[RMDB]
RNA sequence: GGGAACGACUCGAGUAGAGUCGAAAAGAUAUGGAUGCUCACCUUGACAAUGAUGUCGGAAACGAUUGAGUCAAGGGUGAGGCAUCCUAAGUCAAAACAUAAGUUCGAGUUCGCUCGAACUUAUGAAUCUAUAGCCAGAGUUCGCUCUGGCUAUAGAAAAAGAAACAACAACAACAAC
Reactivity to 2A3 in 0.01 (KOAc 150mM, MgCl2 10mM, bicine 150mM(pH8.5), 24C), signal-to-noise 2, nucleotides 027 to 126: g020a010u070a020u150g000g000a010u000g000c000u000c010a020c000c000u000u030g000a010c000a060a300u210g070a050u190g060u040c020g020g020a050a090a050c020g020a010u010u080g040a020g030u000c010a030a030g100g000g010u030g000a030g000g040c000a000u000c000c000u000a060a030g030u010c010a030a000a110a180c010a000u000a000a000g000u000u010c000g000a000g010u060u090c250g110c090u000c010g000a000a010c000u000u000a000u000g000a000a040
Reactivity to DMS in 0.01 (KOAc 150mM, MgCl2 10mM, bicine 150mM(pH8.5), 24C), signal-to-noise 5, nucleotides 027 to 126: g010a040u000a300u000g010g000a000u000g010c000u010c000a020c010c000u000u000g010a010c000a150a130u000g020a140u000g000u000c000g010g000a120a080a210c010g010a000u000u000g010a160g000u000c000a010a010g010g010g010u000g010a050g020g020c000a000u000c000c000u000a030a070g010u000c030a090a060a110a280c010a000u000a000a000g010u000u000c000g000a010g010u010u030c270g020c000u000c000g010a000a000c000u000u000a000u000g000a100a140